[RMDB]
RNA sequence: GGGAACGACUCGAGUAGAGUCGAAAAGGGGUCAUUGUAGUACCUUUGAUCACCACGGGAGCUCUGAAGCCUCCACGGAGCUUUGAUCGUGGUGGGAGGUACGCAGAUAAUGACGGAGGCACCCAAAGUUACGUUGUUGUUCGCAACAACGUAACAAUCAUACAUCCUACUUCGGUAGGAUGUAUGAAAAAGAAACAACAACAACAAC
Reactivity to 2A3 in 0.01 (KOAc 150mM, MgCl2 10mM, bicine 150mM(pH8.5), 24C), signal-to-noise 4, nucleotides 027 to 156: g070g000g010g000u020c040a040u070u080g070u090a300g000u020a020c000c000u200u300u020g020a010u010c000a000c010c000a000c000g000g000g010a020g000c000u030c000u020g040a090a000g010c010c000u000c000c010a030c050g000g000a000g010c000u300u180u000g020a010u050c000g000u000g000g010u010g000g000g000a000g000g010u000a010c000g000c000a000g020a040u280a130a080u100g020a020c050g010g000a000g000g040c000a030c000c000c000a100a150a010g010u000u000a000c000g000u000u000g000u000u000g030u020u080c290g010c160a010a000c000a000a000c000g000u000a000a000c000a000a000
Reactivity to DMS in 0.01 (KOAc 150mM, MgCl2 10mM, bicine 150mM(pH8.5), 24C), signal-to-noise 1, nucleotides 027 to 156: g000g020g030g000u010c020a100u000u000g000u000a150g050u000a040c000c010u000u020u010g000a140u000c000a000c000c000a020c000g020g020g010a010g040c000u030c010u010g020a070a190g010c070c010u040c020c010a220c000g030g010a060g000c000u020u010u010g000a040u020c000g020u020g000g020u010g020g010g010a010g060g030u000a000c000g000c050a050g020a130u010a090a050u010g010a140c040g000g060a030g080g030c010a050c010c000c000a070a080a140g040u000u000a000c000g000u000u000g000u000u000g030u000u010c240g000c000a040a020c000a020a000c020g030u000a000a010c030a090a130

Chemical mapping of a 207-nucleotide RNA with 2A3 and DMS. Reactivities are rounded to 0.1 and cut off at 0 and 3. For 2A3 the reverse transcriptase was SuperScript II with manganese. For DMS the reverse transcriptase was MarathonRT. The data come from the RNA Mapping Database (RMDB), library RNAMAK.